[RMDB]
RNA sequence: GGGAACGACUCGAGUAGAGUCGAAAAGUUUUUAACGCGUGUGCACCCGCUAACACGAAUUACCCAGUAAUUUUCGACUUUACUCGAGUCGUUAUAGCGUGAGUUGGCGGAGUUCUCCGCGAAAUAACCAGACAAUAUGAUUCGUCAUAUUGUCUGGAAAAGAAACAACAACAACAAC
Reactivity to DMS in 0.01 (KOAc 150mM, MgCl2 10mM, bicine 150mM(pH8.5), 24C), signal-to-noise 3, nucleotides 027 to 126: g010u000u010u020u020u010a070a070c290g000c010g010u000g000u000g000c070a090c060c030c050g010c040u010a090a050c020a010c010g000a050a060u000u000a090c080c090c050a130g010u020a040a060u000u000u000u000c000g010a020c010u000u000u000a010c020u000c010g010a000g010u000c000g000u000u000a020u010a040g010c050g010u010g010a050g020u000u000g000g010c000g010g000a080g010u000u010c060u000c000c010g020c010g010a030a070a080u010a090a170